[RMDB]
RNA sequence: GGGAACGACUCGAGUAGAGUCGAAAAAAGCGUGUCCGCUGGCACUUCAAUUGCUAUUACGGAAGUAUUAUCUUCCAUUAGCACGCGUAUUGAGUGUAUUUCCACUUUUAUCGGAAUGUGCCGUAGGGAUAAAUUGUUACGGUCCUGAGUACGAGGAACUCUGUCGUGUCUUCGGACACGACAGAGUAAAAGAAACAACAACAACAAC
Reactivity to 2A3 in 0.01 (KOAc 150mM, MgCl2 10mM, bicine 150mM(pH8.5), 24C), signal-to-noise 1, nucleotides 027 to 156: a000a060g070c080g010u190g100u130c080c070g040c010u080g040g000c050a000c000u060u030c010a070a040u100u060g000c000u000a080u100u140a150c100g000g010a010a030g000u060a230u250u050a170u180c000u000u000c000c000a000u010u010a000g020c010a030c060g140c080g050u120a040u040u050g000a000g000u030g020u090a050u130u100u010c050c000a020c100u080u090u000u110a190u090c010g050g000a130a100u120g000u030g000c000c000g000u010a000g000g000g010a020u100a120a160a180u130u070g010u070u010a050c030g030g050u180c020c000u020g040a010g060u000a030c050g000a050g040g050a030